[RMDB]
RNA sequence: GGGAACGACUCGAGUAGAGUCGAAAAGAUAUGGACCAUAAACGCUACUGGUCGUUGAAAUCGGAAACGAUGGAGACCAAUAGCGCACUAUGGUCCUAAGUCAAAGUCAUUCGUUCGCGAAUGACAACAUGUUAUAUGAGUUCGCUCAUAUAACAUGAAAAGAAACAACAACAACAAC
Reactivity to 2A3 in 0.01 (KOAc 150mM, MgCl2 10mM, bicine 150mM(pH8.5), 24C), signal-to-noise 9, nucleotides 027 to 126: g050a010u090a030u180g000g000a000c000c000a000u010a000a110a000c010g000c000u000a000c010u010g010g010u020c020g030u210u050g010a020a020a010u010c010g010g020a070a040a030c010g000a010u020g020g010a030g000a010c000c000a000a010u010a000g000c000g000c010a020c080u010a000u010g000g000u010c000c000u010a060a000g010u000c060a120a070a050g010u000c000a000u010u010c010g050u030u090c300g010c020g140a010a010u010g000a000c000a000a010
Reactivity to DMS in 0.01 (KOAc 150mM, MgCl2 10mM, bicine 150mM(pH8.5), 24C), signal-to-noise 9, nucleotides 027 to 126: g010a040u000a300u000g010g010a010c000c000a010u000a020a110a170c010g010c000u000a000c050u000g010g010u000c000g000u000u010g000a080a130a010u000c000g010g000a110a080a180c000g010a010u000g000g000a120g010a010c000c000a010a020u000a000g010c000g010c050a050c180u000a010u000g000g000u000c000c000u000a010a060g000u000c030a110a080a120g010u000c000a010u000u000c000g020u000u010c210g020c010g010a010a010u000g010a000c010a070a150